Chemical mapping of a 177-nucleotide RNA with DMS and 2A3.
For 2A3 the reverse transcriptase was SuperScript II with manganese.
Values cover nucleotides 27 to 126.
The reactions ran in a buffer of 150 mM KOAc, 10 mM MgCl2 and 150 mM bicine (pH 8.5), at 24 C.

RNA sequence: GGGAACGACUCGAGUAGAGUCGAAAAGAAAGAAAGAUAAAACGAGGAUUGCAAAGGACGGAACGUCCUUGCCGUUAAGUGGGGUGCUCAGUAAAAAUGCGUUAGCAUUUUACGCCGAAGGGGGAAAAGCUGAAAAAUGAUUCGUCAUUUUUCAGCUAAAAGAAACAACAACAACAAC
Reactivity to DMS in 0.01 (KOAc 150mM, MgCl2 10mM, bicine 150mM(pH8.5), 24C), signal-to-noise 6, nucleotides 027 to 126: g000a090a080a090g020a080a100a100g020a120u030a060a050a070a090c070g010a100g000g020a100u030u010g010c040a040a040a050g000g010a020c010g000g030a130a180c130g010u000c000c000u000u000g000c020c100g010u010u030a060a080g020u010g000g000g010g010u000g000c080u000c070a090g010u020a010a020a020a020a010u010g020c000g000u020u050a110g020c010a000u000u000u010u000a040c050g000c090c070g020a070a080g000g000g000g000g030a100a070a070
Reactivity to 2A3 in 0.01 (KOAc 150mM, MgCl2 10mM, bicine 150mM(pH8.5), 24C), signal-to-noise 5, nucleotides 027 to 126: g070a020a080a010g100a040a120a010g100a050u170a100a130a020a010c050g010a020g080g080a070u050u130g000c040a100a070a080g000g000a010c050g060g130a270a030c120g010u000c000c000u000u000g000c010c000g030u030u100a110a010g020u050g020g000g000g000u050g010c010u030c130a020g030u080a020a050a030a020a050u010g010c020g080u100u120a030g000c000a000u000u000u010u010a020c020g000c020c030g060a030a040g010g000g010g020g010a060a100a010